[RMDB]
RNA sequence: GGGAACGACUCGAGUAGAGUCGAAAACAAAGUUGUGUAAUUCAGGAAAGAUUUCCGCAAAGAGUGGUAACUCUCUCUUUAGGAGUUUUCACUUCACUGAUUUUUACAAUUAUACGGGUGAGGGAGAAACAACCUAGGAUUUCGAUCCUAGGUUGUUAAAAGAAACAACAACAACAAC
Reactivity to DMS in 0.01 (KOAc 150mM, MgCl2 10mM, bicine 150mM(pH8.5), 24C), signal-to-noise 2, nucleotides 027 to 126: c060a100a080a090g010u000u000g000u000g010u000a060a060u010u000c010a030g000g000a030a060a070g020a070u000u000u000c020c010g010c270a030a020a030g000a020g050u000g010g000u000a060a130c300u020c000u000c010u000c040u000u000u000a180g020g000a030g000u040u010u010u000c090a120c100u000u000c120a150c020u000g010a010u000u000u000u000u000a030c050a020a030u010u000a100u010a100c150g020g000g020u000g000a060g000g010g000a110g000a180

The record gives the reactivity of an RNA of 177 nucleotides to DMS.
DMS adducts were read by reverse transcription with MarathonRT.
Conditions: 150 mM KOAc, 10 mM MgCl2 and 150 mM bicine (pH 8.5), 24 C.
For DMS, 1,951 sequencing reads were counted.